[RMDB]
RNA sequence: GGGAACGACUCGAGUAGAGUCGAAAAGGGGUCAGCUCGAUAAGCCUACAAAGGGACAUCGAUCUACACUGAAGCCUCCACGGUGUAGGGAGUCCCAAAAAGGGCUUUUGACGAGCUGACGGAGGCACCCAAACAUCGUGCGUUCGCGCACGAUGAACAUAUAUCCCCAGUUCGCUGGGGAUAUAUGAAAAGAAACAACAACAACAAC
Reactivity to 2A3 in 0.01 (KOAc 150mM, MgCl2 10mM, bicine 150mM(pH8.5), 24C), signal-to-noise 6, nucleotides 027 to 156: g050g010g090g020u010c000a000g000c000u010c010g080a170u100a280a030g000c010c010u080a110c180a080a180a110g020g000g000a040c070a100u300c120g020a020u010c000u000a000c000a000c000u050g030a090a010g010c000c000u000c010c000a010c010g000g010u000g000u000a000g000g000g010a010g000u020c000c000c060a000a010a010a010a020g020g020g010c020u040u010u020u100g150a050c000g000a000g000c000u010g000a000c010g000g000a000g000g000c010a030c000c010c010a030a080a020c000a000u000c000g000u010g010c000g030u050u070c300g010c000g000c130a000c000g000a000u000g000a000a000
Reactivity to DMS in 0.01 (KOAc 150mM, MgCl2 10mM, bicine 150mM(pH8.5), 24C), signal-to-noise 3, nucleotides 027 to 156: g030g030g010g030u000c000a020g020c000u000c010g000a080u000a040a060g030c010c000u010a270c090a090a090a220g020g010g020a010c010a170u000c130g000a040u010c000u000a020c030a020c000u030g010a020a110g000c040c000u000c010c030a300c050g000g010u000g020u000a040g030g020g010a070g000u010c000c010c010a010a000a030a200a160g010g000g010c000u000u000u000u000g010a210c020g000a050g010c000u010g000a000c000g000g020a010g100g060c020a160c010c010c000a110a150a210c000a010u000c000g070u020g010c010g050u000u000c300g060c030g040c000a010c010g000a000u000g000a060a200